[RMDB]
This 177-nucleotide RNA was probed chemically with DMS. The DMS profile rests on 6,880 reads. The data come from the RNA Mapping Database (RMDB), library M2PK50.
RNA sequence: GGGAACGACUCGAGUAGAGUCGAAAACCAUAGGAUUUCGAUCCUAUGGCCUGCUAUGUCGCGUAAUAGCUUUUCCACUCUACUUGGGUCGUUCCCACGCGAUGGGGACCGGUUUCGACCGGUCCAAUGAUGUAUGGGAUUUCGAUCCCAUACAUCAAAAAGAAACAACAACAACAAC
Reactivity to DMS in 0.01 (KOAc 150mM, MgCl2 10mM, bicine 150mM(pH8.5), 24C), signal-to-noise 4, nucleotides 027 to 126: c010c000a010u000a000g010g000a010u000u000u010c190g010a020u000c000c000u000a000u000g010g010c180c120u000g000c000u000a010u000g010u010c180g010c260g000u010a090a010u000a000g000c010u010u000u000u000c000c120a040c010u000c000u000a000c000u000u000g000g000g010u000c000g000u000u000c000c000c000a000c050g020c120g010a100u000g010g010g010g000a010c010c010g010g000u000u010u010c210g010a030c010c000g000g000u000c000c000a010a010